[RMDB]
RNA sequence: GGGAACGACUCGAGUAGAGUCGAAAACAAGUUCGUGCUUGCGACAUACACGUAGGGCGAGGGGUGGGCGAAAGUUGCCAUGAGACCGUAACUUUCGUAGUCAUUGAUAAAGGGGCAGGUCUCGCUCAAAACCUCCCGUGGUUCGCCACGGGAGGAACGGAGAGAAUUUGUUCGCAAAUUCUCUCCGAAAAGAAACAACAACAACAAC
Reactivity to 2A3 in 0.01 (KOAc 150mM, MgCl2 10mM, bicine 150mM(pH8.5), 24C), signal-to-noise 2, nucleotides 027 to 156: c010a000a040g000u040u010c020g030u050g100c040u080u080g070c080g090a060c070a070u220a000c040a020c090g050u080a120g010g020g030c090g040a120g000g000g010g080u190g000g000g000c010g010a000a000a000g010u010u020g000c050c080a150u160g030a000g000a030c010c000g010u000a000a000c000u040u000u000c030g000u030a010g050u050c120a130u060u240g060a040u100a110a010a060g020g000g020g020c050a000g000g000u020c020u020c010g000c000u080c020a100a240a130a120c000c000u000c010c000c010g010u000g010g010u010u030c150g000c040c020a000c000g000g000g000a000g000g000a000a000